The record gives the reactivity of an RNA of 177 nucleotides to DMS and 2A3. 2A3 adducts were read by reverse transcription with SuperScript II with manganese. The reactions ran in a buffer of 150 mM KOAc, 10 mM MgCl2 and 150 mM bicine (pH 8.5), at 24 C.
[RMDB]
RNA sequence: GGGAACGACUCGAGUAGAGUCGAAAAUGGUCGGAUGUCUGUUGGAUUCUACCAGAUCGAAGAAUUCCAGAUUGGCUGGAGAGGUUGACAGAUUGAAUAGUGUCGUGAACGGAGUGGUAGUAGCCUAGUAACCAGCAAACUUCGGUUUGCUGGUUACAAAAGAAACAACAACAACAAC
Reactivity to DMS in 0.01 (KOAc 150mM, MgCl2 10mM, bicine 150mM(pH8.5), 24C), signal-to-noise 2, nucleotides 027 to 126: u000g000g040u040c080g080g000a040u000g010u000c010u010g000u050u020g010g010a090u040u010c010u000a090c080c030a060g010a070u000c080g030a080a140g000a080a070u040u000c020c020a010g000a300u020u010g000g020c040u000g000g010a030g000a080g000g000u000u010g040a060c020a040g010a100u010u050g000a080a090u000a070g030u020g010u010c030g030u020g000a140a180c070g000g000a050g000u000g000g030u000a140g010u030a040g010c000c010u000a210
Reactivity to 2A3 in 0.01 (KOAc 150mM, MgCl2 10mM, bicine 150mM(pH8.5), 24C), signal-to-noise 2, nucleotides 027 to 126: u230g170g000u040c030g120g100a080u150g030u060c040u060g040u030u050g070g000a010u000u010c000u010a190c000c000a050g050a220u250c020g000a000a000g010a060a110u150u040c010c000a020g020a120u130u080g140g000c020u060g000g020a060g020a000g020g020u040u020g000a010c030a010g030a020u190u140g030a040a040u080a280g040u000g060u090c080g000u020g010a010a000c050g020g010a050g000u070g110g000u050a060g000u000a060g040c010c010u020a020